[RMDB]
RNA sequence: GGGAACGACUCGAGUAGAGUCGAAAAAGGGCAGUGACACCACCAGCUUCUUCACUUCUGAGGCUGAGCCUCAGUGGUUAUAGGGUGGGGCAGGGUUUCCAGUUAGCCUUAGAGGGGUAGGGCUCAGCUUUCUAAACAUGUCACAGAAGCCCUGGCCCGAUCUUGUAGCAUUCGUGCUACAAGAUCGAAAAGAAACAACAACAACAAC
Reactivity to 2A3 in 0.01 (KOAc 150mM, MgCl2 10mM, bicine 150mM(pH8.5), 24C), signal-to-noise 1, nucleotides 027 to 156: a030g020g000g000c000a000g020u000g000a020c010a000c010c050a040c000c030a040g030c070u160u090c010u120u130c090a040c040u000u060c040u080g010a000g000g040c060u130g070a010g020c000c000u020c050a070g000u040g060g010u050u070a060u150a160g030g060g000u250g040g050g000g090c040a000g040g020g020u000u120u090c060c030a040g000u050u120a030g010c010c010u060u020a060g000a030g030g010g030g070u070a080g000g020g000c000u030c010a040g010c040u040u140u000c020u080a030a020a060c060a080u060g000u000c000a000c000a000g160a140a020g000c010c040c000u000g020g040c000c000
Description:
An RNA of 207 nucleotides, treated with 2A3 and read out base by base. Reactivities are rounded to 0.1 and cut off at 0 and 3. The RNA was probed in 150 mM KOAc, 10 mM MgCl2 and 150 mM bicine (pH 8.5) at 24 C. Values cover nucleotides 27 to 156.